RNA sequence: GGGAACGACUCGAGUAGAGUCGAAAAGAUAUGGAUCUGUGAUGAGCGAUAAGCUAUAAUCGGAAACGAUUAUUAGCUUUUGACGCUUGCAUGGUCCUAAGUCAAAACUUACGGUUCGCCGUAAGAACGUAACGAUAUUCUUCGGAAUAUCGUUACGAAAAGAAACAACAACAACAAC
Reactivity to DMS in 0.01 (KOAc 150mM, MgCl2 10mM, bicine 150mM(pH8.5), 24C), signal-to-noise 4, nucleotides 027 to 126: g000a010u000a050u010g000g000a010u000c000u010g030u010g010a110u010g000a010g020c000g020a090u010a010a010g010c000u000a000u000a000a000u000c000g020g000a030a020a030c000g010a010u000u000a010u010u010a000g020c000u000u000u010u010g020a150c070g020c000u000u000g000c000a010u000g020g010u000c000c000u000a000a110g000u010c020a100a070a090a150c010u000u000a010c000g010g000u000u010c270g020c000c000g010u000a010a010g000a090a180
Reactivity to 2A3 in 0.01 (KOAc 150mM, MgCl2 10mM, bicine 150mM(pH8.5), 24C), signal-to-noise 6, nucleotides 027 to 126: g000a000u020a010u050g000g000a010u000c020u050g050u040g100a300u090g030a150g000c020g120a180u050a300a000g000c000u000a000u000a010a000u000c000g000g020a020a010a000c020g000a010u000u010a030u030u150a010g000c000u010u020u050u110g150a090c040g000c000u000u010g010c010a020u130g000g000u000c000c000u000a010a000g010u010c010a000a000a130a210c000u010u010a010c010g000g130u030u060c300g050c110c010g000u010a000a010g010a050a030